[RMDB]
RNA sequence: GGGAACGACUCGAGUAGAGUCGAAAAGAAAAGAAACCUCACAAUAAAAAGAGAGAGGAUGAUCGAAAGAUCAGGUGAGGAAAAGGCGAACUCUCUCGAUACUCAGAAAUGAGUAGACGCCAAAGAAGGGUACUAAGAUGUUCGCAUCUUAGUACCCAAAAGAAACAACAACAACAAC
Reactivity to 2A3 in 0.01 (KOAc 150mM, MgCl2 10mM, bicine 150mM(pH8.5), 24C), signal-to-noise 2, nucleotides 027 to 126: g000a020a060a000a000g130a020a050a000c000c000u020c000a020c030a150a180u300a170a090a000a050a000g030a010g000a000g000a000g070g000a110u060g000a000u020c000g030a070a000a040g000a020u000c010a000g040g000u020g030a040g060g050a040a070a010a020g020g000c030g040a020a010c030u000c000u020c000u000c000g000a000u000a000c000u000c000a000g030a070a110a010u010g000a000g000u000a000g000a000c020g000c000c000a020a090a020g090a120a080
Reactivity to DMS in 0.01 (KOAc 150mM, MgCl2 10mM, bicine 150mM(pH8.5), 24C), signal-to-noise 2, nucleotides 027 to 126: g000a130a000a040a170g000a170a090a060c010c000u010c000a020c030a050a150u060a070a160a070a040a110g010a000g000a000g000a020g010g030a140u010g000a000u000c000g010a060a110a180g010a030u000c010a030g000g000u000g000a000g000g000a140a040a020a140g000g010c010g000a070a090c000u000c000u000c000u000c000g000a090u000a000c000u000c000a010g010a010a180a140u000g010a010g010u000a000g000a160c030g080c020c010a130a040a030g000a080a140
The data come from the RNA Mapping Database (RMDB), library OK1LIB. Chemical mapping of a 177-nucleotide RNA with 2A3 and DMS. 2A3 adducts were read by reverse transcription with SuperScript II with manganese. The reactions ran in a buffer of 150 mM KOAc, 10 mM MgCl2 and 150 mM bicine (pH 8.5), at 24 C. The 2A3 profile rests on 1,231 reads. The DMS profile rests on 2,137 reads.